[RMDB]
RNA sequence: GGGAACGACUCGAGUAGAGUCGAAAAUGUCGGUUUCGACCGACAAAAAAAUCCUAAGUCACCUAAGACAGAAGUAGACAUGACGCGUAUCGGAAACGAUACCGUCAACAGCUACUUUCGAGGUGAUAUGGAAAAAAGAGAUGAUUCGUCAUCUCAACAAUGUCGUGAUAUUCGUAUCACGACAUUGAAAAGAAACAACAACAACAAC
Reactivity to 2A3 in 0.01 (KOAc 150mM, MgCl2 10mM, bicine 150mM(pH8.5), 24C), signal-to-noise 3, nucleotides 027 to 156: u100g000u010c010g000g040u060u170u120c090g050a030c000c000g000a010c000a000a020a000a000a000a000a080u060c050c000u070a180a050g000u000c000a000c000c010u110a280a080g080a090c140a100g060a070a000g000u010a000g030a060c070a130u050g000a000c020g080c150g040u000a000u010c020g020g040a080a070a040c010g000a010u010a010c000c000g000u000c000a010a010c010a000g000c000u000a000c000u060u060u050c020g030a000g010g010u000g000a010u020a060u040g040g070a010a030a010a000a080a020g000a000g000a000u030g010a010u030u090c170g080u020c080a000u000c000u030c000a000a010
Reactivity to DMS in 0.01 (KOAc 150mM, MgCl2 10mM, bicine 150mM(pH8.5), 24C), signal-to-noise 3, nucleotides 027 to 156: u000g010u000c000g020g030u010u000u000c240g040a050c000c010g010a040c010a000a000a010a070a060a020a050u000c010c000u010a070a230g000u000c000a020c020c000u000a130a140g010a240c300a060g010a020a000g020u010a000g010a040c060a300u010g010a000c000g000c170g040u000a010u000c000g000g030a200a130a210c000g000a020u010a000c000c020g000u000c010a020a040c120a120g000c000u000a010c000u000u010u010c010g030a040g020g000u000g010a010u000a170u020g020g000a000a030a100a070a090a130g010a060g020a020u000g000a070u020u010c130g000u010c000a020u010c000u020c010a060a080

Overview
The record gives the reactivity of an RNA of 207 nucleotides to 2A3 and DMS. DMS adducts were read by reverse transcription with MarathonRT. Reactivities are rounded to 0.1 and cut off at 0 and 3. The data come from the RNA Mapping Database (RMDB), library RNAMAK. 2A3 adducts were read by reverse transcription with SuperScript II with manganese. The reactions ran in a buffer of 150 mM KOAc, 10 mM MgCl2 and 150 mM bicine (pH 8.5), at 24 C.